[RMDB]
The data come from the RNA Mapping Database (RMDB), library OK2TRN. This 177-nucleotide RNA was probed chemically with DMS.
RNA sequence: GGGAACGACUCGAGUAGAGUCGAAAAUUAAGUAGUAGUUCUCACUACUUAACUACCUAGUGAGAACUACUAGGUAGAGCCUUAGGUACGGUGGACAUGCGAAAGCAUGUCCAUCGUACUUAAGGCAGCACCAUCAAGGGUUCGCCCUUGAUGGUGCAAAAGAAACAACAACAACAAC
Reactivity to DMS in 0.01 (KOAc 150mM, MgCl2 10mM, bicine 150mM(pH8.5), 24C), signal-to-noise 2, nucleotides 027 to 126: u000u000a120a150g010u000a000g020u000a010g020u000u000c010u000c000a050c000u000a010c080u020u000a090a160c230u020a060c170c090u000a010g000u010g000a050g000a020a040c040u000a010c010u000a000g010g010u000a050g020a180g000c000c000u010u000a040g010g020u000a010c010g020g000u000g000g010a000c000a000u000g020c000g000a080a110a190g000c010a000u000g030u010c010c000a000u000c000g010u000a000c000u000u000a000a030g000g010c010a000